[RMDB]
RNA sequence: GGGAACGACUCGAGUAGAGUCGAAAAGGCUAAUUGCCGCCGUUCUGCGCUACGCGGUUUGCCCCCUGUCGAUCGCACAUAUUGCUUCGACGGGUUCUCCCGCUGCGCCUUCGCCGCUGAGACCGGGUGUCGUAAGAGCAUUCGUGCUCUUACGACAAAAAGAAACAACAACAACAAC
Reactivity to 2A3 in 0.01 (KOAc 150mM, MgCl2 10mM, bicine 150mM(pH8.5), 24C), signal-to-noise 1, nucleotides 027 to 126: g000g000c030u060a150a040u150u230g020c030c000g000c040c040g030u060u030c040u100g000c030g000c040u070a010c020g010c010g040g000u040u070u110g010c010c020c000c000c020u020g000u000c000g000a050u030c160g030c160a030c000a150u300a130u160u220g010c000u010u020c010g010a020c000g010g000g000u070u000c030u010c000c000c000g010c000u030g000c000g040c020c010u070u070c050g040c040c020g000c000u030g020a010g010a070c010c020g000g000g090
Reactivity to DMS in 0.01 (KOAc 150mM, MgCl2 10mM, bicine 150mM(pH8.5), 24C), signal-to-noise 3, nucleotides 027 to 126: g000g020c020u000a090a130u010u010g030c020c020g000c060c070g010u000u010c070u010g040c040g040c040u010a060c110g010c020g010g030u000u010u000g000c050c030c100c010c010u010g010u000c000g000a020u000c240g010c030a060c300a160u020a110u010u010g010c010u000u000c000g010a030c000g010g000g020u000u010c110u000c020c010c020g010c060u000g000c020g000c020c140u000u000c090g020c020c020g020c040u010g010a110g010a070c110c040g010g000g020